[RMDB]
RNA sequence: GGGAACGACUCGAGUAGAGUCGAAAAGACGGAUUCUUCUUGGAAUGUGAGGAAUCCGAACCUUCUCACAUUCCAUUUGCCAUGAGGAGGUAGUAUACUUAAUGGCAAAUAUAGAUUAGGUAUACAGGCAGUGGUGACUAUUCGUAGUCAUCACUGCAAAAGAAACAACAACAACAAC
Reactivity to 2A3 in 0.01 (KOAc 150mM, MgCl2 10mM, bicine 150mM(pH8.5), 24C), signal-to-noise 3, nucleotides 027 to 126: g050a000c010g010g000a000u000u000c020u050u010c010u010u030g030g060a050a020u040g030u010g010a000g000g010a010a000u000c000c010g000a000a000c000c000u030u020c010u000c000a010c000a030u040u010c000c010a030u040u030u050g000c010c010a010u030g020a010g090g040a020g020g040u060a040g030u010a030u010a020c000u010u020a070a010u020g020g000c000a000a030a000u130a020u030a000g110a050u060u050a020g040g020u020a010u010a030c020a010g110
Reactivity to DMS in 0.01 (KOAc 150mM, MgCl2 10mM, bicine 150mM(pH8.5), 24C), signal-to-noise 8, nucleotides 027 to 126: g010a150c020g000g000a020u000u000c010u010u000c060u000u010g020g000a040a030u000g010u000g000a010g000g000a020a000u000c010c060g010a030a040c070c020u010u000c020u000c010a030c060a030u000u000c010c010a220u000u000u000g000c030c010a050u000g000a060g000g000a080g010g000u000a100g010u000a070u000a040c000u000u000a100a030u000g000g010c040a020a040a050u000a130u010a080g000a070u010u000a030g000g010u000a040u000a020c080a150g010